[RMDB]
RNA sequence: GGGAACGACUCGAGUAGAGUCGAAAACUGCCGCCGGGACGCAGUGAUCCUCGCAGGGUCGCACGGUCGCCUCGGGUCGGCCUCGUGUUGGCUCGACCUGCGAGGGGAGCGAGUGGCGAGCCCGACCAAAACUUUCUCGCCUUCGGGCGAGAAAGAACAUAGAGUACCAGUUCGCUGGUACUCUAUGAAAAGAAACAACAACAACAAC
Reactivity to 2A3 in 0.01 (KOAc 150mM, MgCl2 10mM, bicine 150mM(pH8.5), 24C), signal-to-noise 2, nucleotides 027 to 156: c020u030g020c010c010g010c020c020g080g080g130a050c020g000c020a140g190u000g010a000u000c000c000u000c010g000c010a020g010g010g120u130c050g000c050a030c040g010g040u020c020g020c010c010u030c000g010g000g010u010c000g000g000c000c020u090c110g150u170g030u090u160g070g010c070u070c090g050a060c010c000u000g000c000g000a010g000g010g000g000a010g000c010g000a080g080u070g020g000c000g010a040g020c020c010c010g010a030c020c030a040a070a020a080c000u000u000u000c000u000c000g000c000c020u030u060c170g060g010g000c000g000a000g000a000a000a000g000a010a000
Reactivity to DMS in 0.01 (KOAc 150mM, MgCl2 10mM, bicine 150mM(pH8.5), 24C), signal-to-noise 2, nucleotides 027 to 156: c090u000g000c020c020g090c000c010g000g000g000a220c030g020c000a230g030u010g010a060u000c010c000u000c090g000c070a110g000g020g020u010c070g030c040a040c030g020g030u000c010g040c040c080u010c010g000g000g020u030c030g000g030c020c000u020c110g000u060g050u010u000g040g000c050u010c030g020a100c000c000u000g000c010g030a060g000g020g010g000a050g010c010g010a160g020u000g010g000c000g030a120g010c000c060c010g040a100c100c040a040a080a200a140c000u000u000u000c010u010c010g030c000c010u000u010c300g060g000g030c000g010a000g000a000a000a000g010a090a180

This 207-nucleotide RNA was probed chemically with 2A3 and DMS.
As a SHAPE reagent, 2A3 marks flexible, mostly unpaired nucleotides at the ribose 2'-OH.
DMS adducts were read by reverse transcription with MarathonRT.
Source: RMDB library M2RFPK, as collected in RNAgym.
For 2A3, 3,848 sequencing reads were counted.